[RMDB]
RNA sequence: GGGAACGACUCGAGUAGAGUCGAAAAAGAGGUGAGGAGGGAUCCCCGAGACGCUGGAGGAGCACCGGGAAAAAGAAAAGAAGGCAAGGAAUUGGUAGAAAAGAGCGAGCCUCCCGAUACGAGUUUGGAACAACCGCGUUCGCGCGGUUGAAAAGAAACAACAACAACAAC
Reactivity to DMS in 0.01 (KOAc 150mM, MgCl2 10mM, bicine 150mM(pH8.5), 24C), signal-to-noise 3, nucleotides 027 to 129: a090g030a100g020g000u050g020a060g010g040a020g000g000g010a210u030c060c000c020c110g040a050g000a080c130g030c110u080g000g000a050g010g060a070g060c130a050c070c050g050g000g000a030a040a070a100a160g010a000a050a050a050g020a120a020g000g040c090a070a050g000g030a050a050u000u000g000g060u030a070g000a060a010a100a000g000a050g070c170g000a090g010c050c000u020c000c020c110g020a140u080a000c130g030a050g000u050u000u090g030g100a060a040
Reactivity to 2A3 in 0.01 (KOAc 150mM, MgCl2 10mM, bicine 150mM(pH8.5), 24C), signal-to-noise 2, nucleotides 027 to 129: a000g090a030g050g090u050g040a020g000g010a020g030g030g000a000u000c040c000c000c010g030a050g010a040c150g000c090u050g000g090a050g000g000a000g000c000a040c010c000g070g000g000a180a110a000a000a030g030a000a120a000a000g050a000a000g120g000c060a000a000g030g000a000a000u070u070g030g030u050a040g100a050a040a060a000g060a000g020c080g060a000g000c000c000u080c000c020c000g000a060u030a060c050g060a060g110u020u090u050g010g000a090a010